[RMDB]
RNA sequence: GGGAACGACUCGAGUAGAGUCGAAAAAUCGGGAUAGAACGCAUAAUAACGUCUUUACUGUAGACAAGAUCGCGUUGCAAGCGCAUACGAACUAAUCUAUAUAAGUUAGUAAUAAACAACAAUUGACGAACAAGUAUUGAGUUGAAACGAUCAGCGCCAAGAAAGGACGGUUCGCCGUCCUUUCUUGAAAAGAAACAACAACAACAAC
Reactivity to DMS in 0.01 (KOAc 150mM, MgCl2 10mM, bicine 150mM(pH8.5), 24C), signal-to-noise 1, nucleotides 027 to 156: a120u000c090g010g000g000a130u050a070g040a080a040c070g000c020a050u000a150a180u000a140a070c090g000u010c070u000u000u000a160c080u000g000u000a070g000a120c040a010a190g020a160u010c030g000c070g030u010u000g000c010a080a220g000c170g000c060a110u010a040c030g000a070a070c010u010a050a070u000c050u000a090u000a110u020a110a100g000u000u000a070g020u010a070a070u000a110a030a080c010a070a070c090a010a100u000u000g010a170c090g060a050a070c060a060a100g000u000a120u000u000g010a090g000u000u000g010a040a070a050c070g010a080u010c070a100g000c050g020c100
Reactivity to 2A3 in 0.01 (KOAc 150mM, MgCl2 10mM, bicine 150mM(pH8.5), 24C), signal-to-noise 3, nucleotides 027 to 156: a000u160c040g020g000g000a020u030a150g140a140a020c010g000c040a020u040a120a060u120a210a200c060g000u000c000u060u030u090a300c170u190g070u210a000g020a020c020a060a000g020a100u150c120g000c000g000u000u040g000c020a050a050g000c010g000c030a030u040a210c020g040a070a000c000u000a020a060u050c010u080a070u040a040u050a260a120g000u010u010a010g030u010a000a060u080a260a170a040c080a040a010c010a010a240u060u170g100a040c000g060a060a040c000a110a000g010u050a080u100u150g020a100g000u030u110g020a080a000a010c030g050a020u070c050a050g060c020g040c040
An RNA of 207 nucleotides, treated with DMS and 2A3 and read out base by base. The 2A3 profile rests on 780 reads. For DMS the reverse transcriptase was MarathonRT. The reactions ran in a buffer of 150 mM KOAc, 10 mM MgCl2 and 150 mM bicine (pH 8.5), at 24 C.